An RNA of 207 nucleotides, treated with DMS and 2A3 and read out base by base.
For 2A3 the reverse transcriptase was SuperScript II with manganese.
For 2A3, 847 sequencing reads were counted.
RNA sequence: GGGAACGACUCGAGUAGAGUCGAAAAGCCAAAGCAAAUGCCAGUGAGGGUAUAGCUCUCUAGGAUCUCCAGAAUAGAGGCACCAUAUGAGCAACAACACUAGACUGGGUUUCUCAGAGUCUGUUUCUCACACACUUUAGUACCUCUCAGCUUAACAAUAAAAUGCCUCAUUCGUGAGGCAUUUUAUAAAAGAAACAACAACAACAAC
Reactivity to DMS in 0.01 (KOAc 150mM, MgCl2 10mM, bicine 150mM(pH8.5), 24C), signal-to-noise 1, nucleotides 027 to 156: g000c030c030a050a120a110g030c030a050a080a090u000g020c020c020a120g020u000g000a100g030g000g030u000a130u000a070g010c020u010c000u020c020u010a090g010g000a070u010c010u020c000c000a100g000a050a230u010a040g020a040g020g020c050a050c070c030a110u000a130u010g000a000g050c050a040a120c030a090a090c030a090c020u000a060g030a300c020u010g010g040g020u000u000u010c010u000c090a130g010a020g060u000c010u000g010u000u010u040c030u010c010a120c040a090c040a080c040u000u010u010a040g020u000a050c040c010u010c020u000c070a060g010c060u000u010a120a080c030a160
Reactivity to 2A3 in 0.01 (KOAc 150mM, MgCl2 10mM, bicine 150mM(pH8.5), 24C), signal-to-noise 1, nucleotides 027 to 156: g000c020c060a070a010a000g030c050a100a050a030u180g000c050c120a030g050u040g040a040g000g040g000u120a020u010a070g020c010u000c000u000c020u010a020g030g020a070u020c080u020c030c010a030g000a050a000u030a050g020a000g030g080c090a040c030c020a070u230a140u300g080a030g020c010a030a050c000a040a030c030a030c030u030a010g050a020c000u020g000g020g030u010u090u030c020u010c020a010g010a000g040u000c020u020g040u000u030u000c000u000c000a000c000a010c000a000c040u070u070u130a030g020u140a110c040c000u050c030u070c040a020g050c070u160u110a130a060c010a050